[RMDB]
RNA sequence: GGGAACGACUCGAGUAGAGUCGAAAAAGGAGUUGGGCUUCACUUAGGGAUUGUAGAGAUGUAGAACAACUCAAAGCGAAGUAGAUUCUAUAUGCUUACGGGCGACAUUUAUUUUUGAGGCGCUCAAGGGUUAAUUAUUCUUCGGAAUAAUUAACCCAAAAGAAACAACAACAACAAC
Reactivity to DMS in 0.01 (KOAc 150mM, MgCl2 10mM, bicine 150mM(pH8.5), 24C), signal-to-noise 2, nucleotides 027 to 126: a080g000g000a030g010u000u010g000g000g000c000u000u010c000a020c010u000u030a120g030g000g030a110u000u000g030u020a130g000a110g000a120u030g060u010a090g010a060a030c030a020a010c030u010c010a060a050a080g030c140g020a020a010g000u000a180g000a050u020u010c020u020a060u010a030u020g000c050u010u000a120c120g010g010g020c030g010a060c030a050u020u040u020a080u010u010u050u000u000g020a100g000g010c000g010c030u000c020a070a140
Reactivity to 2A3 in 0.01 (KOAc 150mM, MgCl2 10mM, bicine 150mM(pH8.5), 24C), signal-to-noise 4, nucleotides 027 to 126: a010g110g020a030g000u040u040g060g140g020c000u010u020c010a030c010u040u050a080g050g040g090a220u020u120g080u070a070g020a040g040a160u120g090u190a040g050a120a010c000a000a010c000u020c070a010a030a000g040c010g030a010a000g000u080a010g010a060u020u010c020u050a060u020a050u300g150c050u090u100a020c050g000g000g000c010g020a040c000a000u080u220u260a100u040u190u150u090u160g100a060g030g080c030g000c000u010c010a020a080

Background:
An RNA of 177 nucleotides, treated with DMS and 2A3 and read out base by base. Values are in units of 0.01, from 0 to 300, in steps of 10. 2A3 adducts were read by reverse transcription with SuperScript II with manganese. The reactions ran in a buffer of 150 mM KOAc, 10 mM MgCl2 and 150 mM bicine (pH 8.5), at 24 C. The data come from the RNA Mapping Database (RMDB), library OK1LIB. For DMS the reverse transcriptase was MarathonRT. For DMS, 3,509 sequencing reads were counted.